[RMDB]
RNA sequence: GGGAACGACUCGAGUAGAGUCGAAAAAUCUGUGCGUGGGUUAGGUAGCCUCAUAUACAUGAACGACUGAUGUAGAGUUCGAUUGGGGAGAUAAGUAUCUAAUGCGUGUCAUUAGGUCACCUCGGUACUUCUGGUACCGUUUCGACGGUACCAGAAGAAAAGAAACAACAACAACAAC
Reactivity to DMS in 0.01 (KOAc 150mM, MgCl2 10mM, bicine 150mM(pH8.5), 24C), signal-to-noise 3, nucleotides 027 to 126: a060u020c020u020g010u010g000c030g030u000g010g000g000u000u000a050g000g020u000a080g020c010c030u000c040a040u020a070u010a110c140a060u060g010a050a040c030g000a090c080u020g000a130u020g000u000a070g000a300g000u000u000c030g010a060u010u000g000g000g010g010a130g030a120u030a060a090g000u030a030u000c010u000a000a000u000g000c010g010u020g000u040c010a010u000u010a010g000g010u000c020a090c030c010u000c050g010g000u000a080
Reactivity to 2A3 in 0.01 (KOAc 150mM, MgCl2 10mM, bicine 150mM(pH8.5), 24C), signal-to-noise 3, nucleotides 027 to 126: a000u020c010u060g080u000g010c020g030u010g010g020g020u010u050a040g060g000u040a040g060c000c000u020c010a050u170a010u050a160c180a070u160g030a050a000c010g180a020c060u110g080a170u130g120u100a050g000a010g160u040u060c040g040a050u030u040g000g000g030g070a070g000a080u130a070a040g080u090a020u050c000u010a000a010u040g030c120g050u100g060u130c000a000u030u190a000g000g000u020c000a010c020c030u050c030g010g010u040a020